The data come from the RNA Mapping Database (RMDB), library OK3TST. Structure probing data (2A3 and DMS) for a 207-nucleotide construct. The reactions ran in a buffer of 150 mM KOAc, 10 mM MgCl2 and 150 mM bicine (pH 8.5), at 24 C. Values cover nucleotides 27 to 156.

RNA sequence: GGGAACGACUCGAGUAGAGUCGAAAAGGAUGAUCUGGACCCGGCCAGUCAUCCGAAUUAGUACCGGGAUUGCAUCGUCGAGCCGUCAGGGGCGAAGACGAGAACCUGAAAGCACGAAGCACCGGGCGGUGCGUGUGCGAGAUAUAACGCCCAACAAAAUGGUAGCAUAUUUCGAUAUGCUACCAUUAAAAGAAACAACAACAACAAC
Reactivity to 2A3 in 0.01 (KOAc 150mM, MgCl2 10mM, bicine 150mM(pH8.5), 24C), signal-to-noise 2, nucleotides 027 to 156: g000g020a030u040g000a070u080c040u040g030g000a030c010c000c000g000g020c020c000a000g000u000c000a000u020c000c020g000a000a030u180u210a050g110u100a130c040c010g000g000g000a010u020u210g110c050a090u020c000g000u000c010g000a040g000c020c000g070u220c170a100g240g000g000g070c020g020a050a020g000a000c010g000a000g010a010a030c020c000u110g030a110a030a000g000c000a010c050g060a130a010g000c010a000c030c030g000g170g000c090g030g010u020g000c010g000u140g000u010g070c000g040a030g000a000u190a030u000a070a030c030g030c000c000c020a080a030c020a060a270
Reactivity to DMS in 0.01 (KOAc 150mM, MgCl2 10mM, bicine 150mM(pH8.5), 24C), signal-to-noise 3, nucleotides 027 to 156: g010g030a030u000g040a010u010c040u010g030g000a140c020c030c060g010g050c040c010a040g020u000c010a020u010c010c010g010a070a060u010u000a120g010u010a090c050c020g000g000g000a180u010u000g050c040a180u000c040g020u010c020g010a300g040c010c010g000u030c190a200g020g010g030g010c000g020a110a170g010a050c040g010a070g000a060a080c020c020u000g010a130a110a150g050c000a060c000g020a140a220g020c050a080c020c020g000g010g040c140g020g000u000g030c010g020u000g000u000g000c040g000a060g010a120u010a090u010a070a100c010g010c010c010c000a090a130c200a130a110